[RMDB]
RNA sequence: GGGAACGACUCGAGUAGAGUCGAAAACGACCAGGGCCACGCCCAGCGUGGCCAGCAAUUCGAGCACCAGGGCCGACAAGAACGCGAUCCGCAGCGUCGCCAUCGCCGACCGCCGGUGGUCAGCAGAUAAUAGAACGACUUUCGAGUCGUUCUAUUAAAAAGAAACAACAACAACAAC
Reactivity to 2A3 in 0.01 (KOAc 150mM, MgCl2 10mM, bicine 150mM(pH8.5), 24C), signal-to-noise 2, nucleotides 027 to 126: c040g040a050c030c030a050g000g000g060c000c000a010c010g000c010c200c040a070g050c020g000u040g040g100c040c010a000g030c020a010a050u110u100c050g070a010g030c000a030c020c020a050g060g000g050c030c000g040a050c040a060a090g060a160a030c050g010c020g040a050u050c020c000g050c080a030g040c000g040u030c010g000c030c000a050u020c030g060c040c050g020a100c000c040g060c020c040g040g030u060g040g040u000c010a010g050c030a030g040a120
Reactivity to DMS in 0.01 (KOAc 150mM, MgCl2 10mM, bicine 150mM(pH8.5), 24C), signal-to-noise 4, nucleotides 027 to 126: c100g010a140c060c020a180g010g010g010c010c000a020c010g000c040c110c200a100g010c010g050u000g000g000c010c020a020g010c110a080a130u010u000c110g020a080g010c030a080c040c050a090g010g000g020c020c010g010a050c090a070a110g010a070a060c100g000c030g000a060u010c060c070g000c050a150g020c070g010u000c060g000c020c060a070u000c040g010c040c020g020a050c040c040g020c110c040g000g020u000g010g020u000c040a080g010c080a090g000a130